[RMDB]
RNA sequence: GGGAACGACUCGAGUAGAGUCGAAAAUCGAAAACCAAGAAACCAAACUACAGUCACUCCGUCAACUACUUAUUGAAGGAGAGCAAAGUGGUGACGCUGAUUAUGACCUUGAUAGCUUCAUCAAUGAGACGAUAAGUUUUUUCGAAAACUUAUCGUCAAAAGAAACAACAACAACAAC
Reactivity to 2A3 in 0.01 (KOAc 150mM, MgCl2 10mM, bicine 150mM(pH8.5), 24C), signal-to-noise 5, nucleotides 027 to 126: u110c020g010a020a000a010a080c050c010a040a030g130a080a060a010c040c030a040a040a030c050u130a100c070a080g050u060c020a030c090u010c000c020g020u000c000a060a020c030u240a050c030u180u210a050u080u100g040a060a020g040g020a040g000a010g020c040a040a100a040g050u030g030g000u000g020a010c020g000c040u020g060a040u050u100a060u180g070a060c000c040u030u050g030a050u110a090g020c010u050u020c020a040u030c010a050a170u140g020a060
Reactivity to DMS in 0.01 (KOAc 150mM, MgCl2 10mM, bicine 150mM(pH8.5), 24C), signal-to-noise 5, nucleotides 027 to 126: u010c080g010a090a060a100a180c090c050a080a120g000a090a070a110c100c060a050a060a070c100u000a070c100a120g000u010c080a070c010u000c020c000g010u000c000a010a030c160u010a100c140u010u000a230u010u010g000a060a040g000g000a010g000a130g020c060a020a090a070g020u010g000g030u000g010a070c090g020c010u000g000a050u010u000a040u010g010a100c100c070u010u010g010a040u010a050g000c050u000u010c020a040u000c080a030a120u010g000a190
This 177-nucleotide RNA was probed chemically with 2A3 and DMS. 2A3 adducts were read by reverse transcription with SuperScript II with manganese. The 2A3 profile rests on 5,992 reads.